The data come from the RNA Mapping Database (RMDB), library VIROID. An RNA of 207 nucleotides, treated with 2A3 and read out base by base. For 2A3, 591 sequencing reads were counted.
RNA sequence: GGGAACGACUCGAGUAGAGUCGAAAACCGAGAAUUCCUUUGAUGUUCCCCAGCCAGGGGUUCUCGUCCUCGAGUUUCUUGAUCUUCUUCCUUGUCUUCCGGAGGUCCCUCUCGAGCUCCUCUAACCUUUUUCUUCCAUUCACCCACUGCUCGAGAAGGCUAUAGUGUACUUCGGUACACUAUAGCCAAAAGAAACAACAACAACAAC
Reactivity to 2A3 in 0.01 (KOAc 150mM, MgCl2 10mM, bicine 150mM(pH8.5), 24C), signal-to-noise 2, nucleotides 027 to 156: c000c020g010a010g000a000a070u100u150c060c040u270u180u300g180a220u190g090u050u040c000c000c010c060a060g090c080c090a030g000g020g020g020u000u030c000u010c010g030u080c000c020u060c020g050a100g060u000u030u050c000u150u080g090a080u010c020u100u010c000u100u060c090c000u050u060g080u080c010u050u010c020c000g060g020a010g030g020u030c000c020c020u020c010u000c000g040a020g010c020u040c040c000u000c060u090a130a250c010c040u100u080u130u150u130c060u070u000c040c010a140u140u050c060a050c020c000c000a040c070u060g000c000u000c010g010a000g000a030a020

For 2A3 the reverse transcriptase was SuperScript II with manganese. The reactions ran in a buffer of 150 mM KOAc, 10 mM MgCl2 and 150 mM bicine (pH 8.5), at 24 C.